[RMDB]
RNA sequence: GGGAACGACUCGAGUAGAGUCGAAAAGGGAGAUCCGAGCAGAGGCAUAGCGAACUGCGCACGGCGAAGCCUUGAGGGAAAGCCGUAGGACCCGGGUUCGAUUCCCGGCCGCUCCACCGAAGGGCCACCUACCCAUCAGCUUCGGCUGAUGGGUAGGAAAAGAAACAACAACAACAAC
Reactivity to DMS in 0.01 (KOAc 150mM, MgCl2 10mM, bicine 150mM(pH8.5), 24C), signal-to-noise 2, nucleotides 027 to 126: g000g010g000a150g000a120u030c030c020g050a020g040c020a000g000a180g050g010c080a030u000a220g070c100g000a190a080c030u000g000c070g090c070a050c000g020g000c080g000a220a190g000c000c010u000u020g000a300g000g000g000a150a090a170g000c050c070g020u020a030g000g030a090c070c030c000g020g000g020u030u070c070g010a300u000u050c000c000c000g040g000c170c060g000c050u050c100c060a160c010c040g010a160a050g000g000g040c000c110a110
Reactivity to 2A3 in 0.01 (KOAc 150mM, MgCl2 10mM, bicine 150mM(pH8.5), 24C), signal-to-noise 1, nucleotides 027 to 126: g080g000g040a120g010a040u020c000c010g000a020g000c010a020g030a040g130g030c050a110u140a080g030c030g050a080a030c030u020g020c000g000c010a020c000g040g000c000g070a070a010g010c000c000u000u010g060a100g030g010g040a000a030a040g000c030c070g090u090a060g060g000a020c000c030c000g000g000g000u040u030c000g010a030u090u000c000c000c000g000g010c000c010g030c020u040c030c020a060c000c020g020a000a030g030g010g000c000c000a010

An RNA of 177 nucleotides, treated with DMS and 2A3 and read out base by base. Reactivities are rounded to 0.1 and cut off at 0 and 3. Reactivities are given for positions 27 through 126. For 2A3, 1,057 sequencing reads were counted. The reactions ran in a buffer of 150 mM KOAc, 10 mM MgCl2 and 150 mM bicine (pH 8.5), at 24 C. 2A3 adducts were read by reverse transcription with SuperScript II with manganese. DMS adducts were read by reverse transcription with MarathonRT. For DMS, 1,076 sequencing reads were counted.